[RMDB]
RNA sequence: GGGAACGACUCGAGUAGAGUCGAAAACACUUUAUUGAGUUAUGAUUGAUAUACAAAAUGCUGUAUAUAUUUAAUCGGAACAACUUGAUGGGUUUGGAGUUAAGUGUAUACUCAUGAGAAUGUUACCGCACUCAAUGCUUGGAAUCAUAAGAGAUUCAUAGCAACAACAUUUCGAUGUUGUUGCUAUAAAAGAAACAACAACAACAAC
Reactivity to 2A3 in 0.01 (KOAc 150mM, MgCl2 10mM, bicine 150mM(pH8.5), 24C), signal-to-noise 4, nucleotides 027 to 156: c020a010c000u190u220u080a040u040u070g010a020g020u040u080a100u180g030a090u120u040g010a000u010a000u010a020c020a020a190a150a190u160g040c090u010g000u000a000u000a000u000a030u030u150u210a030a020u040c010g010g010a040a030c020a040a050c080u070u090g090a050u070g050g020g000u040u110u120g130g010a120g020u090u120a160a020g030u070g060u080a030u050a040c010u010c020a040u090g010a030g050a140a030u040g020u030u050a100c000c030g010c020a020c010u030c010a040a050u080g000c030u040u060g040g010a020a010u010c010a030u030a200a090g070a000g000a080u000u040c010
Reactivity to DMS in 0.01 (KOAc 150mM, MgCl2 10mM, bicine 150mM(pH8.5), 24C), signal-to-noise 2, nucleotides 027 to 156: c050a080c060u010u010u010a020u010u000g010a060g020u010u010a090u000g010a040u000u000g000a030u000a010u000a060c020a120a140a110a130u000g020c180u000g000u000a050u000a000u010a040u010u010u000a030a030u000c010g020g000a120a170c120a060a060c040u000u010g020a050u010g020g030g010u000u010u000g010g010a220g010u000u000a030a070g030u010g020u000a030u010a040c040u000c020a070u000g020a200g040a100a050u000g000u000u010a040c000c060g010c060a080c020u000c020a050a060u000g000c060u020u000g010g000a050a050u000c020a070u010a110a220g010a300g000a040u010u000c030
Description: An RNA of 207 nucleotides, treated with 2A3 and DMS and read out base by base. The RNA was probed in 150 mM KOAc, 10 mM MgCl2 and 150 mM bicine (pH 8.5) at 24 C. DMS adducts were read by reverse transcription with MarathonRT. For 2A3, 1,971 sequencing reads were counted.